[RMDB]
RNA sequence: GGGAACGACUCGAGUAGAGUCGAAAAAGUAUACUGCCACUUGUGUAAAAUAACUUUUAGUACAAGCGAGUACACGCAGUAUACCGCCACUUGUGUGAGAAUACUUUUUGUACAAGCGAGUACACGCCGUCUGCCUAGAAUUCGUUCUAGGCAGACGAAAAGAAACAACAACAACAAC
Reactivity to 2A3 in 0.01 (KOAc 150mM, MgCl2 10mM, bicine 150mM(pH8.5), 24C), signal-to-noise 5, nucleotides 027 to 126: a000g020u010a020u010a000c010u000g020c000c020a070c030u020u050g010u010g030u050a030a070a090a140u240a100a120c050u100u110u080u130a060g050u080a020c030a050a010g040c040g040a030g040u110a040c080a010c070g000c000a000g000u000a000u010a010c000c020g030c010c010a110c040u070u100g000u010g000u000g100a110g080a180a070u070a100c000u080u070u010u050u050g030u040a060c040a080a060g090c060g010a010g030u010a040c040a010c070g050c000
Reactivity to DMS in 0.01 (KOAc 150mM, MgCl2 10mM, bicine 150mM(pH8.5), 24C), signal-to-noise 2, nucleotides 027 to 126: a050g000u020a000u020a040c030u030g000c010c030a130c040u000u020g000u000g030u020a040a020a030a040u020a070a130c260u030u000u000u030a030g010u040a010c050a030a160g010c060g030a300g040u000a050c060a090c300g000c000a030g010u000a000u000a010c050c010g000c020c010a120c160u000u000g000u010g000u040g000a040g030a130a040u020a050c020u000u000u000u000u000g020u020a000c060a070a170g000c150g000a230g000u010a000c060a130c100g000c090
Description:
The record gives the reactivity of an RNA of 177 nucleotides to 2A3 and DMS. High DMS reactivity at an A or C suggests that its Watson-Crick edge is free. For DMS the reverse transcriptase was MarathonRT. Reactivities are given for positions 27 through 126.